[RMDB]
Structure probing data (2A3 and DMS) for a 177-nucleotide construct.

RNA sequence: GGGAACGACUCGAGUAGAGUCGAAAACCCACACACAGAUUGCCCCGAUGUCCAACCAGAAGAAGUGAAACUGCUGCUGGGUCUGGAGAGGUGAAGACCCGUGGCCAGCUUCUGUUGUUGCCAUCGGCUGAGGCAACUUAUUCGUAAGUUGCCUCAGAAAAGAAACAACAACAACAAC
Reactivity to 2A3 in 0.01 (KOAc 150mM, MgCl2 10mM, bicine 150mM(pH8.5), 24C), signal-to-noise 5, nucleotides 027 to 126: c000c020c000a010c000a000c000a000c000a040g290a150u110u170g070c030c010c000c000g000a000u010g000u040c080c010a000a020c000c020a020g010a030a000g020a070a030g050u090g160a150a100a100c070u080g010c000u010g000c030u180g000g010g010u000c010u030g080g050a140g020a040g100g130u140g080a030a000g000a010c010c000c010g000u010g020g020c060c050a030g010c000u000u000c000u000g060u110u100g010u020u000g020c010c000a000u000c010g000g020
Reactivity to DMS in 0.01 (KOAc 150mM, MgCl2 10mM, bicine 150mM(pH8.5), 24C), signal-to-noise 3, nucleotides 027 to 126: c010c000c000a100c250a090c190a140c130a080g000a100u010u000g020c070c100c010c010g010a030u000g010u040c120c010a110a090c060c010a020g000a040a040g020a110a100g040u030g000a060a030a300c060u000g000c000u000g050c010u020g060g010g000u000c020u000g010g030a210g040a070g000g020u010g000a140a040g010a010c020c000c010g020u000g000g030c010c140a050g000c010u000u000c000u000g020u000u010g010u010u000g000c300c020a010u010c040g000g010
Reactivities are given for positions 27 through 126. DMS adducts were read by reverse transcription with MarathonRT. The data come from the RNA Mapping Database (RMDB), libraries RFM100 and RFMREP.